Chemical mapping of a 177-nucleotide RNA with DMS and 2A3. In probing experiments dimethyl sulfate is read out at A N1 and C N3, which are open when not base-paired. Values are in units of 0.01, from 0 to 300, in steps of 10.
[RMDB]
RNA sequence: GGGAACGACUCGAGUAGAGUCGAAAAGAGAAGAAGCGCGCGAAUUGGAAACCAGGGAACUAUAUUACGCGCGCAAGGAACCGGGCCUUGGUUCCUUGGAAAGAUUAGAUAAUUGCCCUGGUAAGAAGAUUACGAUUACCUUCGGGUAAUCGUAAUCAAAAGAAACAACAACAACAAC
Reactivity to DMS in 0.01 (KOAc 150mM, MgCl2 10mM, bicine 150mM(pH8.5), 24C), signal-to-noise 3, nucleotides 027 to 126: g000a110g020a140a110g000a120a110g010c010g020c010g030c010g030a090a070u010u030g000g020a270a110a060c000c000a010g000g010g010a190a090c040u000a020u020a040u020u000a100c010g010c000g010c010g030c010a010a000g020g000a030a000c010c010g000g020g020c130c090u020u030g000g010u000u000c000c000u030u000g010g000a080a070a080g000a100u030u060a070g010a100u030a060a080u010u010g020c000c000c010u000g010g000u010a080a080g000a140a100
Reactivity to 2A3 in 0.01 (KOAc 150mM, MgCl2 10mM, bicine 150mM(pH8.5), 24C), signal-to-noise 4, nucleotides 027 to 126: g110a000g060a150a010g080a110a010g040c010g000c010g010c020g020a030a070u110u060g080g070a110a020a030c000c000a000g010g000g000a070a090c060u040a050u030a050u220u120a100c000g000c000g000c000g000c000a000a000g000g000a000a000c000c000g000g180g050c040c060u080u060g010g000u000u000c000c000u010u000g010g030a070a030a000g080a060u100u180a020g080a150u160a100a090u160u180g030c000c000c000u010g000g000u000a020a000g050a030a010